[RMDB]
RNA sequence: GGGAACGACUCGAGUAGAGUCGAAAAACUUUGGCCGACGCUGCUAGGCGGGUGCGCACUGCUGUCUGGCCCGGCGCCGCGCUAGGGCGCACGUUUCGCUCUGCGGAGGGAAACCGGGCUGAAAUAAUAAUUAUGAUGCAUUCGUGCAUCAUAAUUAAAAAGAAACAACAACAACAAC
Reactivity to 2A3 in 0.01 (KOAc 150mM, MgCl2 10mM, bicine 150mM(pH8.5), 24C), signal-to-noise 2, nucleotides 027 to 126: a010c030u110u050u080g020g000c030c000g020a020c030g030c030u060g000c070u060a070g110g000c000g000g020g020u090g000c020g000c020a050c050u100g020c000u040g080u130c070u120g030g010c050c000c000g120g000c070g010c010c010g010c000g000c070u150a050g010g040g010c010g030c030a020c050g060u090u130u080c070g020c020u010c000u010g020c070g050g030a100g050g040g010a030a030a040c010c010g000g000g000c000u010g020a060a040a010u210a040a040
Reactivity to DMS in 0.01 (KOAc 150mM, MgCl2 10mM, bicine 150mM(pH8.5), 24C), signal-to-noise 7, nucleotides 027 to 126: a090c060u000u000u000g010g010c020c020g000a090c070g010c020u000g020c080u000a100g020g010c020g010g020g020u000g010c050g010c040a070c060u010g010c040u000g010u010c060u010g010g010c010c040c030g000g010c170g010c010c010g020c050g010c080u000a040g010g000g010c010g020c080a040c140g010u000u010u000c000g010c010u000c000u000g020c070g020g000a090g010g000g000a040a050a080c010c020g000g000g010c010u000g010a030a040a070u010a080a140